Structure probing data (2A3 and DMS) for a 207-nucleotide construct.

[RMDB]
RNA sequence: GGGAACGACUCGAGUAGAGUCGAAAAAGUAUCUGAAGGCCAUGCAAGUCUCGAUUCCGUUGCUUUGUUUAACUCUCAGCGCUGGACGUCUUACUUACGGGAAGGGCUUGAUGACGAGCACGUAGAUUUUGUCGGCGAUCUCACUACUCCGUUUUACGGUUCAUUAAUACUUCGGUAUUAAUGAACCAAAAGAAACAACAACAACAAC
Reactivity to 2A3 in 0.01 (KOAc 150mM, MgCl2 10mM, bicine 150mM(pH8.5), 24C), signal-to-noise 7, nucleotides 027 to 156: a000g050u050a060u040c060u080g050a090a030g040g000c020c010a040u130g040c040a050a080g030u010c020u030c070g100a140u090u010c030c030g030u050u110g010c020u070u040u080g070u050u160u070a060a060c020u030c000u010c070a020g010c050g000c060u040g000g040a030c020g020u010c020u050u100a130c020u070u070a020c060g030g000g040a040a030g040g010g010c010u030u060g030a050u080g020a040c060g010a010g010c030a020c090g040u060a040g020a120u060u100u060u110g080u050c010g010g010c020g030a050u010c040u010c050a030c030u070a030c020u040c020c040g000u000u000u030u080a060c070
Reactivity to DMS in 0.01 (KOAc 150mM, MgCl2 10mM, bicine 150mM(pH8.5), 24C), signal-to-noise 2, nucleotides 027 to 156: a120g000u000a050u010c050u010g010a080a110g010g010c020c040a070u010g010c060a100a100g010u000c010u010c040g000a160u010u000c030c040g010u000u000g010c010u000u000u010g020u010u000u000a070a080c060u000c010u000c030a120g000c070g010c030u020g010g010a110c050g010u000c050u010u010a060c060u000u010a050c040g010g000g000a150a130g010g000g030c010u000u010g020a070u000g000a070c030g000a110g010c030a070c050g010u000a060g000a120u010u000u000u010g000u000c060g010g000c050g010a070u000c030u000c030a040c030u000a050c030u000c020c030g010u000u000u000u000a090c140

2A3 adducts were read by reverse transcription with SuperScript II with manganese.
For 2A3, 8,285 sequencing reads were counted.
The RNA was probed in 150 mM KOAc, 10 mM MgCl2 and 150 mM bicine (pH 8.5) at 24 C.
The data come from the RNA Mapping Database (RMDB), library PDB130.